[RMDB]
RNA sequence: GGGAACGACUCGAGUAGAGUCGAAAACACGUGGAUAGCAUCGCCAUUUGAAAGACCGAAGGGGUCUGCAACGUAUGUCAAGGCGCUUGAAUAUACAGGUGAUUGUUCUACAAUAGCGCUAAUACCGCAGUGCGUGACAGUUCGCUGUCACGCACUGAAAAGAAACAACAACAACAAC
Reactivity to DMS in 0.01 (KOAc 150mM, MgCl2 10mM, bicine 150mM(pH8.5), 24C), signal-to-noise 2, nucleotides 027 to 126: c080a110c120g000u000g010g070a050u010a030g000c030a090u000c020g000c040c010a110u000u000u020g000a070a160a040g020a040c000c030g050a110a120g000g000g020g000u000c000u010g000c090a050a060c130g010u010a030u000g020u010c080a080a100g020g000c120g000c060u010u000g010a130a030u000a070u020a030c070a100g000g030u010g010a090u000u010g030u010u010c030u000a070c030a110a140u010a090g000c030g000c010u000a040a120u010a110c200c140g000
Reactivity to 2A3 in 0.01 (KOAc 150mM, MgCl2 10mM, bicine 150mM(pH8.5), 24C), signal-to-noise 1, nucleotides 027 to 126: c140a020c030g020u040g020g000a030u030a050g020c020a070u000c000g040c060c000a100u180u050u000g130a190a070a010g020a010c000c000g040a150a110g260g100g000g030u030c010u010g000c010a090a000c080g060u050a010u000g100u090c020a000a100g170g060c060g000c110u000u090g030a110a010u080a000u000a020c000a030g090g000u040g060a100u000u190g060u080u030c000u000a020c060a170a200u060a060g010c010g020c020u000a030a030u050a130c000c030g010